[RMDB]
An RNA of 207 nucleotides, treated with 2A3 and read out base by base.
The reactions ran in a buffer of 150 mM KOAc, 10 mM MgCl2 and 150 mM bicine (pH 8.5), at 24 C.
Source: RMDB library RNAMAK, as collected in RNAgym.
Reactivities are rounded to 0.1 and cut off at 0 and 3.
RNA sequence: GGGAACGACUCGAGUAGAGUCGAAAAGGGGUCGAGCUAUAAUCGAGUACAGGCAUCGAUCUAUACUGAAGCCUCCACGGUAUAGGGAGCCUGUAGUUCGGUAGCUCGACGGAGGCACCCAAAGACCAUCGAUCACGUUCGCGUGAUCGAUGGUCAACAUCCACGUCCUGUUCGCAGGACGUGGAUGAAAAGAAACAACAACAACAAC
Reactivity to 2A3 in 0.01 (KOAc 150mM, MgCl2 10mM, bicine 150mM(pH8.5), 24C), signal-to-noise 2, nucleotides 027 to 156: g020g000g090g020u030c000g000a000g010c050u090a050u240a300a100u090c010g000a010g030u020a000c000a000g000g000c000a060u300c250g000a000u000c000u000a000u000a000c000u010g070a120a020g010c000c010u040c010c010a000c000g000g000u000a000u000a000g000g000g000a000g000c000c010u010g000u010a020g010u020u010c000g000g070u150a020g000c000u000c010g000a000c010g000g000a000g000g000c000a010c010c010c020a050a140a010g010a000c000c000a010u010c000g000a000u000c000a010c000g040u120u070c240g040c010g110u000g000a000u000c010g000a000u000g000g000u000c010a000a000